[RMDB]
RNA sequence: GGGAACGACUCGAGUAGAGUCGAAAAGUAAAGCGCGAGGGCUGGUGAGGAUUAGGAGGCGUGAGAGAGAUUGUAGGGAUCCUGCCUCCUCCCUCUCCGCGCGGCGCCUCCUAGCCGAUAUAAAAAAGUAGUACUUUCGUUUCGACGAAAGUACUACAAAAGAAACAACAACAACAAC
Reactivity to 2A3 in 0.01 (KOAc 150mM, MgCl2 10mM, bicine 150mM(pH8.5), 24C), signal-to-noise 1, nucleotides 027 to 126: g020u020a000a070a110g040c020g000c070g030a260g080g180g000c140u140g000g080u060g040a030g000g000a110u180u140a130g000g050a020g040g030c030g010u190g030a130g010a000g010a000g000a020u010u090g120u190a180g140g000g000a030u010c000c000u000g030c000c010u000c020c000u010c000c000c000u000c020u000c000c020g000c020g010c000g010g020c000g060c000c010u000c000c000u010a030g000c000c060g060a050u080a000u140a230a170a000a000a000a000
Reactivity to DMS in 0.01 (KOAc 150mM, MgCl2 10mM, bicine 150mM(pH8.5), 24C), signal-to-noise 1, nucleotides 027 to 126: g000u020a050a120a090g010c020g010c020g000a090g010g010g010c040u020g020g020u010g000a070g030g000a090u000u010a050g020g000a030g000g020c000g000u000g020a100g010a050g000a100g000a080u000u010g020u000a160g000g010g020a070u000c050c040u000g000c020c000u010c000c000u000c300c050c020u000c010u000c000c030g010c070g010c050g000g010c030g000c030c020u000c000c010u000a040g020c080c020g030a040u020a100u000a020a060a060a070a120a110

Record summary:
Structure probing data (2A3 and DMS) for a 177-nucleotide construct. For 2A3 the reverse transcriptase was SuperScript II with manganese. The 2A3 profile rests on 1,169 reads. The RNA was probed in 150 mM KOAc, 10 mM MgCl2 and 150 mM bicine (pH 8.5) at 24 C. For DMS, 1,074 sequencing reads were counted.